The record gives the reactivity of an RNA of 177 nucleotides to DMS and 2A3. Source: RMDB library OK2TRN, as collected in RNAgym. For 2A3, 1,654 sequencing reads were counted. For 2A3 the reverse transcriptase was SuperScript II with manganese. DMS adducts were read by reverse transcription with MarathonRT.

RNA sequence: GGGAACGACUCGAGUAGAGUCGAAAAGUGCGGGAGGCUUUAGCCUUGGUGAGUAAUCAGAAGCAAGUCGUGGUCAGGGUCAACCCUGAUCAGGCAGGAGCUAUUCGUGAACAAAUAGCUAAAGUACCGUACGAUCGUAGUUCGCUACGAUCGUACGAAAAGAAACAACAACAACAAC
Reactivity to DMS in 0.01 (KOAc 150mM, MgCl2 10mM, bicine 150mM(pH8.5), 24C), signal-to-noise 2, nucleotides 027 to 126: g010u000g000c040g020g010g000a110g000g010c020u000u000u000a100g010c030c110u000u000g000g030u000g020a160g000u020a080a070u020c080a120g000a070a080g000c070a180a110g020u000c000g020u010g010g010u030c000a020g010g000g010u010c240a200a120c010c000c000u000g000a000u000c010a020g000g000c000a180g000g020a170g010c000u000a050u010u000c030g040u010g020a150a130c070a030a050a030u000a070g000c010u000a060a030a050g030u010a070c130
Reactivity to 2A3 in 0.01 (KOAc 150mM, MgCl2 10mM, bicine 150mM(pH8.5), 24C), signal-to-noise 2, nucleotides 027 to 126: g050u040g020c050g040g000g020a060g080g050c000u100u070u030a040g000c000c030u020u040g110g000u060g030a110g020u100a040a050u010c040a020g020a050a010g020c060a080a000g020u020c070g210u050g000g030u000c000a000g070g000g050u270c080a240a300c020c000c000u000g000a000u010c010a000g030g000c000a020g000g100a060g000c040u070a060u070u070c040g040u070g060a040a030c030a000a050a030u070a040g000c000u020a010a000a030g040u030a110c030